[RMDB]
RNA sequence: GGGAACGACUCGAGUAGAGUCGAAAAUAAAAUCCGCCAACGUCCCUCCUCAUUGACGCACUUCCAUUUUUGCCCAGGUAGACAGUUUUUGAGUAGCGCCGGGUCAGAGCACUCCGAGUUAAGGCGCGACCUGGUCCACGUUCGCGUGGACCAGGUCAAAAGAAACAACAACAACAAC
Reactivity to 2A3 in 0.01 (KOAc 150mM, MgCl2 10mM, bicine 150mM(pH8.5), 24C), signal-to-noise 1, nucleotides 027 to 126: u150a010a040a000a000u000c050c000g010c000c000a080a000c070g070u010c000c010c000u090c030c000u000c000a010u070u110g070a030c020g000c000a010c070u020u070c000c000a060u000u030u000u010u250g060c020c050c050a000g050g030u040a040g040a030c070a020g010u010u000u000u000u090g190a130g000u090a010g000c000g000c000c050g000g000g100u090c090a090g070a030g200c110a070c040u000c030c000g040a050g090u040u120a140a020g040g000c010g000c000

Background:
Structure probing data (2A3) for a 177-nucleotide construct. Conditions: 150 mM KOAc, 10 mM MgCl2 and 150 mM bicine (pH 8.5), 24 C. High 2A3 reactivity points to a flexible backbone, as in loops and unpaired stretches. The data come from the RNA Mapping Database (RMDB), library OK1LIB.